Chemical mapping of a 177-nucleotide RNA with DMS and 2A3. The DMS profile rests on 4,843 reads. Reactivities are rounded to 0.1 and cut off at 0 and 3.

RNA sequence: GGGAACGACUCGAGUAGAGUCGAAAACGCUCGGCGCUUCCCGGUCGCAGAAAGGUCGUGUAGCACAGGUUGUGCGCCAUCAUGAUGCUCGGAUACAGCGAGGCGAAAUCCAAGGUGCAGACGGGACCACAGACCUUAGGUUCGCCUAAGGUCUGUGAAAAGAAACAACAACAACAAC
Reactivity to DMS in 0.01 (KOAc 150mM, MgCl2 10mM, bicine 150mM(pH8.5), 24C), signal-to-noise 3, nucleotides 027 to 126: c080g000c020u010c070g020g010c040g000c080u000u000c030c020c040g000g020u020c050g010c090a070g000a060a090a090g010g000u010c040g010u010g020u040a100g000c000a040c040a170g000g000u000u010g060u020g000c000g000c050c040a080u020c060a070u010g000a100u040g000c010u000c000g010g020a140u030a140c160a110g000c000g000a110g000g010c060g020a050a090a090u010c030c040a060a090g000g020u000g010c020a070g010a080c050g000g030g010a080c080
Reactivity to 2A3 in 0.01 (KOAc 150mM, MgCl2 10mM, bicine 150mM(pH8.5), 24C), signal-to-noise 4, nucleotides 027 to 126: c030g040c010u040c030g050g010c010g010c020u040u030c020c000c030g010g000u060c010g000c030a040g150a060a050a010g130g010u030c050g090u100g030u130a030g040c020a020c010a060g130g100u160u110g060u070g060c000g000c050c020a120u120c060a040u150g150a050u080g060c020u030c070g050g020a050u090a120c050a050g040c050g040a040g040g000c030g020a060a040a030u060c030c010a030a090g070g010u050g000c000a010g050a060c000g050g000g000a000c000
The RNA was probed in 150 mM KOAc, 10 mM MgCl2 and 150 mM bicine (pH 8.5) at 24 C.
For 2A3 the reverse transcriptase was SuperScript II with manganese.
DMS adducts were read by reverse transcription with MarathonRT.